An RNA of 177 nucleotides, treated with DMS and 2A3 and read out base by base. The 2A3 profile rests on 624 reads.
RNA sequence: GGGAACGACUCGAGUAGAGUCGAAAAGCGUGGCAAGCCAGCGGGCGAUAUACAGUUGGAGAAUCCUCACAUGCGAUUGCUGUUCGACGAGAAGAGCGGUUUUCUGAAGACCAUCACGCGUAAGAACGCCACGGGAUGAAUUCGUUCAUCCCGUGGCAAAAGAAACAACAACAACAAC
Reactivity to DMS in 0.01 (KOAc 150mM, MgCl2 10mM, bicine 150mM(pH8.5), 24C), signal-to-noise 1, nucleotides 027 to 126: g020c040g040u020g000g010c120a120a080g020c060c000a010g060c020g100g010g030c080g010a070u000a010u010a070c030a100g040u110u000g000g000a120g000a030a190u000c020c000u010c070a080c140a110u000g040c090g000a030u000u020g030c070u010g020u000u000c050g010a080c220g000a240g000a110a030g000a030g010c080g030g000u000u000u000u010c100u000g030a110a030g000a050c080c120a000u010c040a010c060g000c040g040u040a030a070g010a140a140c130
Reactivity to 2A3 in 0.01 (KOAc 150mM, MgCl2 10mM, bicine 150mM(pH8.5), 24C), signal-to-noise 1, nucleotides 027 to 126: g000c020g020u020g020g030c090a090a020g020c030c020a080g060c100g040g100g000c070g030a000u120a010u060a220c110a110g110u050u030g070g040a020g040a020a050u020c040c000u060c000a040c000a060u180g020c050g090a130u060u140g080c090u110g060u180u060c020g040a120c090g000a020g040a290a030g010a000g000c000g050g000u030u100u010u030c040u090g080a070a070g040a030c010c010a030u070c000a000c040g100c020g060u060a110a070g000a080a000c110

Reactivities are given for positions 27 through 126.